[RMDB]
RNA sequence: GGGAACGACUCGAGUAGAGUCGAAAAGGAGUACACGUGGAACGCGGUUAAGGCGGCGUGGGAUUGGGUGUGGAAUGCGCUGAAGGCCGGGUUCGAUGCGUUCAUAGGGUUCUUCACCGACACGAUCCAAUGGCCUUCAUUUCGAUGAAGGCCAUUGAAAAGAAACAACAACAACAAC
Reactivity to DMS in 0.01 (KOAc 150mM, MgCl2 10mM, bicine 150mM(pH8.5), 24C), signal-to-noise 3, nucleotides 027 to 126: g000g010a110g010u010a060c080a080c060g020u010g000g010a060a090c030g020c020g020g000u000u000a110a170g000g020c070g000g010c030g020u000g000g020g000a160u010u000g010g000g000u020g010u000g020g020a080a040u010g000c050g010c070u010g000a070a080g000g010c030c050g000g000g000u000u010c040g010a060u000g010c070g010u000u000c050a070u000a130g000g020g000u000u000c070u000u010c020a130c030c040g010a070c120a070c100g000a130u020c070
Reactivity to 2A3 in 0.01 (KOAc 150mM, MgCl2 10mM, bicine 150mM(pH8.5), 24C), signal-to-noise 1, nucleotides 027 to 126: g070g000a060g040u060a020c020a000c090g030u100g090g090a090a020c020g020c040g180g000u030u050a100a020g090g010c020g000g060c040g040u020g010g030g000a060u070u140g030g080g020u150g000u040g040g010a060a040u030g020c070g000c020u010g050a020a020g060g000c000c000g000g040g000u040u100c040g030a080u080g010c060g000u000u010c000a060u090a040g090g000g000u030u050c000u080u070c030a060c060c040g020a010c050a020c080g050a060u070c030
The record gives the reactivity of an RNA of 177 nucleotides to DMS and 2A3. The reactions ran in a buffer of 150 mM KOAc, 10 mM MgCl2 and 150 mM bicine (pH 8.5), at 24 C.